[RMDB]
RNA sequence: GGGAACGACUCGAGUAGAGUCGAAAAUUUGCAGGUCUCGGCACGACAAUCGACGUAAUCCUCGUAAACGGAACAAUGCGAGCCGGUGACGUCAUCGUGCUCACUGGCUCCGACGGAGCAAUUACGACCGGGUGGUACGAUUCGUCGUACCACCCGGAAAAGAAACAACAACAACAAC
Reactivity to 2A3 in 0.01 (KOAc 150mM, MgCl2 10mM, bicine 150mM(pH8.5), 24C), signal-to-noise 2, nucleotides 027 to 126: u060u030u070g010c110a020g000g000u100c040u040c070g000g000c010a000c040g080a030c090a030a090u060c020g100a080c000g030u060a060a000u050c010c000u000c050g000u030a050a120a090c110g080g040a050a120c070a050a170u040g030c040g100a000g090c090c060g000g030u000g050a060c010g020u010c000a260u060c060g130u110g100c020u020c010a010c030u000g020g030c000u030c000c000g050a010c040g010g010a030g050c050a050a160u070u060a040c030g020a090
An RNA of 177 nucleotides, treated with 2A3 and read out base by base. It was measured as part of the RMDB library OK1LIB. 2A3 adducts were read by reverse transcription with SuperScript II with manganese.